RNA sequence: GGGAACGACUCGAGUAGAGUCGAAAAAGAUAACUGGACAUGCAGGGCGUCCAGUACGUAUGAAUGCAAUACCACGAGUAUUGGCAGCCAAUUCAGUUGCCCGUUCUGCUGCUACUGCAUCAGUUAGGGCGAUUAUGGUAUUCGUACCAUAAUCGCCAAAAGAAACAACAACAACAAC
Reactivity to 2A3 in 0.01 (KOAc 150mM, MgCl2 10mM, bicine 150mM(pH8.5), 24C), signal-to-noise 4, nucleotides 027 to 126: a000g160a020u110a090a000c020u010g050g030a010c010a030u090g020c010a050g000g060g020c000g020u030c060c000a000g000u010a000c020g090u080a040u160g130a130a020u140g010c000a000a020u010a010c000c030a110c270g070a070g020u010a010u010u050g080g000c010a020g020c010c110a060a080u140u140c020a030g040u080u070g050c000c010c000g000u020u000c000u020g020c000u020g000c000u070a300c010u060g000c000a020u000c050a060g020u010u220a040g020
Reactivity to DMS in 0.01 (KOAc 150mM, MgCl2 10mM, bicine 150mM(pH8.5), 24C), signal-to-noise 2, nucleotides 027 to 126: a070g000a140u050a020a040c000u000g010g000a060c090a070u000g000c040a040g000g000g010c040g000u000c080c000a000g000u000a000c140g040u000a130u030g010a050a090u010g000c050a020a030u000a040c020c000a220c160g020a250g000u000a030u020u000g040g040c000a030g070c130c050a100a050u050u010c040a100g040u010u010g000c000c010c020g010u000u000c000u000g030c080u010g020c030u000a050c040u000g000c080a030u000c060a020g000u000u000a040g000